[RMDB]
RNA sequence: GGGAACGACUCGAGUAGAGUCGAAAAGAUAUGGACGUGCACAACUUUUGACGCUCUGCUAAUCGGAAACGAUUACAGAGCGAUAAGUUGACACGUCCUAAGUCAAAGUUACCCUUCGGGGUAACAAGUUGGUCAUUAUGUUCGCAUAAUGACCAACAAAAGAAACAACAACAACAAC
Reactivity to 2A3 in 0.01 (KOAc 150mM, MgCl2 10mM, bicine 150mM(pH8.5), 24C), signal-to-noise 3, nucleotides 027 to 126: g030a000u060a050u160g000g000a000c020g010u020g000c300a030c010a300a020c020u040u060u180u300g300a170c080g010c010u010c000u010g090c200u020a000a000u010c000g010g000a050a050a020c000g000a000u000u000a000c000a000g010a000g020c000g000a000u010a000a000g000u000u020g010a020c000a000c000g000u020c000c000u000a030a010g000u010c030a060a000a050g000u000u000a010c000c010c000u000u040c300g110g000g000g000u020a000a000c000a000a030
Reactivity to DMS in 0.01 (KOAc 150mM, MgCl2 10mM, bicine 150mM(pH8.5), 24C), signal-to-noise 3, nucleotides 027 to 126: g010a050u000a300u020g000g000a000c000g050u000g010c090a180c010a000a020c000u000u000u000u000g020a220c130g010c000u000c000u000g020c300u000a000a010u000c000g000g010a090a090a170c000g010a010u000u000a040c000a000g000a000g000c000g000a000u000a000a000g020u000u020g000a300c000a000c020g010u010c000c010u000a010a070g010u000c030a130a150a130g000u000u000a000c000c000c000u000u000c260g010g000g000g010u000a000a000c010a040a090
Overview
This 177-nucleotide RNA was probed chemically with 2A3 and DMS. For DMS the reverse transcriptase was MarathonRT. For 2A3, 8,337 sequencing reads were counted. Conditions: 150 mM KOAc, 10 mM MgCl2 and 150 mM bicine (pH 8.5), 24 C. Reactivities are given for positions 27 through 126. The data come from the RNA Mapping Database (RMDB), library TTRDES.